[RMDB]
Structure probing data (2A3) for a 207-nucleotide construct. The RNA was probed in 150 mM KOAc, 10 mM MgCl2 and 150 mM bicine (pH 8.5) at 24 C.
RNA sequence: GGGAACGACUCGAGUAGAGUCGAAAAACUCCUAUUCCAACACGUCCUCGUCGUACAGAGUGGUAACAUGUGUCACCACAUAUCCAAGCUUGGGUACACGGGCCUGACCCAACCCCUUGGGCGGAUGAAAACCAGAUUACGUUCGCGUAAUCUGGAACCCAUUCGCAAUGUUCGCAUUGCGAAUGGGAAAAGAAACAACAACAACAAC
Reactivity to 2A3 in 0.01 (KOAc 150mM, MgCl2 10mM, bicine 150mM(pH8.5), 24C), signal-to-noise 1, nucleotides 027 to 156: a000c090u090c040c000u030a150u070u070c040c010a110a030c110a050c080g090u080c020c020u040c020g110u020c010g000u070a010c040a060g120a000g000u030g030g030u150a060a030c020a140u210g090u130g010u120c020a020c020c020a030c000a050u050a010u030c000c010a010a010g010c070u010u030g050g010g010u020a020c050a060c060g010g040g000c060c020u210g020a300c000c000c000a020a070c000c000c000c000u010u010g000g000g000c000g000g040a000u050g120a090a030a030a010c000c000a000g000a000u000u000a000c000g040u040u050c210g000c000g140u000a000a000u000c000u000g000g000a000a000